[RMDB]
RNA sequence: GGGAACGACUCGAGUAGAGUCGAAAACAUAUUCCUCAACUCUUGUAGGAGCAUUCAUGGACAUGGGAGGAAUUAAAGUACAAGUAAUAACAAUACUCAAUAAGCAACUACUCGCCACAACAAACUAUUACAUAUUUCAAAUAGUGGUGAUACAAAAAUUGCCUAUUCCAUUCGUGGAAUAGGCAAUAAAAGAAACAACAACAACAAC
Reactivity to DMS in 0.01 (KOAc 150mM, MgCl2 10mM, bicine 150mM(pH8.5), 24C), signal-to-noise 1, nucleotides 027 to 156: c020a140u020a140u010u000c030c000u000c010a060a080c050u000c000u000u020g000u020a110g010g020a100g060c010a180u010u000c080a130u020g040g000a120c090a120u000g000g020g000a040g000g050a080a080u000u010a030a000a090g000u000a110c090a020a090g000u010a060a070u000a110a190c090a130a100u000a090c080u010c060a070a070u000a020a140g000c040a040a050c080u000a060c110u000c000g010c020c000a020c020a030a120c060a100a110a130c070u000a060u010u000a040c070a150u000a090u000u000u020c030a030a090a100u000a150g030u000g050g000u000g040a110u000a130c090a010a070a080a080
Reactivity to 2A3 in 0.01 (KOAc 150mM, MgCl2 10mM, bicine 150mM(pH8.5), 24C), signal-to-noise 4, nucleotides 027 to 156: c030a020u160a040u110u000c000c000u030c030a050a140c010u070c030u070u100g080u220a110g010g090a030g000c000a070u090u080c030a050u150g080g040a060c020a050u030g030g070g010a050g000g010a020a020u040u090a060a040a020g040u030a040c040a080a020g090u060a010a190u060a180a030c060a050a150u060a100c040u030c090a040a070u130a190a010g060c030a030a020c020u150a060c030u000c040g000c020c050a040c030a110a000c040a070a270a070c040u030a070u200u130a030c100a110u270a170u110u190u190c110a100a070a030u050a090g010u000g000g030u010g010a020u030a130c100a010a160a000a080